[RMDB]
RNA sequence: GGGAACGACUCGAGUAGAGUCGAAAAGAUAUGGAACCAUGUUACACUAAUCCUCAGGGAGCCUUUUGGAUCGGAAACGAUCCUUGGGCGACGAUCUGAGGGAUUAGUGUAACAUGGUUCCUAAGUCGGAUCUUACUAGGUUCGCCUAGUAAGAUCCAAAAGAAACAACAACAACAAC
Reactivity to DMS in 0.01 (KOAc 150mM, MgCl2 10mM, bicine 150mM(pH8.5), 24C), signal-to-noise 1, nucleotides 027 to 126: g020a090u000a300u000g020g000a000a010c000c000a000u000g000u010u000a010c000a000c000u000a000a010u010c010c000u010c000a000g000g010g000a010g050c000c000u010u000u020u000g020g020a020u000c000g010g010a160a160a240c000g000a030u000c000c000u010u000g000g000g000c020g020a080c270g010a030u000c010u000g000a050g020g030g010a000u000u000a000g000u010g030u000a000a010c000a010u000g000g010u000u010c000c010u000a030a040g010u000c120